Chemical mapping of a 207-nucleotide RNA with DMS and 2A3. DMS adducts were read by reverse transcription with MarathonRT. Values are in units of 0.01, from 0 to 300, in steps of 10. The reactions ran in a buffer of 150 mM KOAc, 10 mM MgCl2 and 150 mM bicine (pH 8.5), at 24 C.
RNA sequence: GGGAACGACUCGAGUAGAGUCGAAAACAACACAAGCAGACAUGAAGAGACAUACACGUAGCGGACGGAACAAAUGUCGGCAACCGUCGUAAUGUCGUGAGACAUGGACAAGGAGCCAAGGCCGCGCAGCACGAACAGCUGCAACCAUGUCUGCAAACCUAGUCAGCUAGUUCGCUAGCUGACUAGGAAAAGAAACAACAACAACAAC
Reactivity to DMS in 0.01 (KOAc 150mM, MgCl2 10mM, bicine 150mM(pH8.5), 24C), signal-to-noise 2, nucleotides 027 to 156: c060a160a090c090a050c020a080a300g000c040a010g000a000c000a050u000g000a210a240g000a210g000a250c000a090u000a030c100a240c040g060u000a080g000c000g010g000a150c000g040g000a170a130c050a100a160a030u000g070u010c100g000g000c020a070a140c000c000g000u000c010g040u010a000a050u050g020u000c000g010u000g050a230g000a020c000a010u040g000g020a010c080a220a070g040g010a300g040c000c050a010a160g000g000c010c000g060c040g000c020a000g020c020a180c010g000a070a190c080a180g060c030u010g000c000a010a120c120c000a010u000g010u000c000u000g010c020a020a040a110
Reactivity to 2A3 in 0.01 (KOAc 150mM, MgCl2 10mM, bicine 150mM(pH8.5), 24C), signal-to-noise 1, nucleotides 027 to 156: c010a030a030c000a000c030a040a090g030c000a020g000a010c000a000u000g010a040a000g060a010g040a010c030a040u110a030c040a000c190g000u050a000g000c020g010g000a040c070g070g000a090a000c010a000a140a000u130g020u030c020g020g000c000a000a000c000c000g000u000c000g000u110a030a020u000g010u010c010g010u000g000a070g000a000c000a000u000g010g000a010c000a090a160g000g010a000g000c000c020a010a030g060g020c010c010g020c040g010c000a000g000c000a000c080g070a070a050c120a020g020c000u000g010c010a010a010c040c000a000u000g000u020c000u010g010c000a000a000a000